[RMDB]
Conditions: 150 mM KOAc, 10 mM MgCl2 and 150 mM bicine (pH 8.5), 24 C. An RNA of 177 nucleotides, treated with DMS and read out base by base.

RNA sequence: GGGAACGACUCGAGUAGAGUCGAAAAGAUAUGGACUCCAUUUGCGCGCCCUGGCAACGAGGACGGUCGGAAACGACCGUCUACCCACCGUUGCCAGGGCGAACUACGCACAUGGAGUCCUAAGUCAGAAUUAUUCUGUGUUCGCACAGAAUAAUUCAAAAGAAACAACAACAACAAC
Reactivity to DMS in 0.01 (KOAc 150mM, MgCl2 10mM, bicine 150mM(pH8.5), 24C), signal-to-noise 1, nucleotides 027 to 126: g030a100u000a260u010g000g000a020c000u010c010c000a050u000u000u000g000c000g010c010g020c030c000c000u000g020g000c000a010a060c080g020a140g020g010a000c000g110g000u000c000g040g040a040a120a220c000g070a000c000c020g000u000c000u000a020c020c010c130a300c080c000g000u010u020g000c050c010a010g000g000g040c010g010a000a000c080u000a300c070g000c000a020c080a030u000g000g000a010g000u000c020c000u010a010a060g030u000c030a160